[RMDB]
RNA sequence: GGGAACGACUCGAGUAGAGUCGAAAAUCUCCAAGGUGAAUAGCCUCUGGUCAAAUGUAUUAAUGUAGAUAAGGGAAGUCGGCAAAACCGAUCUGUAACUUCGGGAUAAGGAUUGGCUCUAAAGGUUAUUCAAUGGCUUGUUCGCAAGCCAUUGAAUAAAAGAAACAACAACAACAAC
Reactivity to DMS in 0.01 (KOAc 150mM, MgCl2 10mM, bicine 150mM(pH8.5), 24C), signal-to-noise 1, nucleotides 027 to 126: u000c000u000c000c040a130a050g000g010u020g000a080a090u000a060g000c000c000u000c080u030g000g000u050c120a070a090a110u010g030u010a020u000u010a040a160u050g020u010a050g000a050u040a020a110g000g000g000a050a110g040u050c000g000g000c220a080a050a210a240c010c000g070a030u020c040u000g070u030a210a280c050u010u000c040g000g000g080a160u000a010a070g020g010a060u000u000g000g000c000u010c030u020a010a000a030g000g000u000u000
Reactivity to 2A3 in 0.01 (KOAc 150mM, MgCl2 10mM, bicine 150mM(pH8.5), 24C), signal-to-noise 2, nucleotides 027 to 126: u020c030u000c000c000a060a030g040g010u140g020a070a040u090a080g040c000c000u040c080u050g000g000u010c010a070a000a000u160g050u060a080u130u220a130a090u130g110u140a050g050a090u090a100a020g140g030g000a040a000g020u040c000g010g040c010a000a000a140a030c000c010g020a040u030c050u120g120u090a080a060c000u020u040c040g060g000g010a110u080a050a010g040g000a010u020u010g010g000c020u010c010u060a030a030a000g090g000u070u000
Structure probing data (DMS and 2A3) for a 177-nucleotide construct. The 2A3 profile rests on 925 reads. The reactions ran in a buffer of 150 mM KOAc, 10 mM MgCl2 and 150 mM bicine (pH 8.5), at 24 C. As a SHAPE reagent, 2A3 marks flexible, mostly unpaired nucleotides at the ribose 2'-OH. 2A3 adducts were read by reverse transcription with SuperScript II with manganese. It was measured as part of the RMDB library RFM100.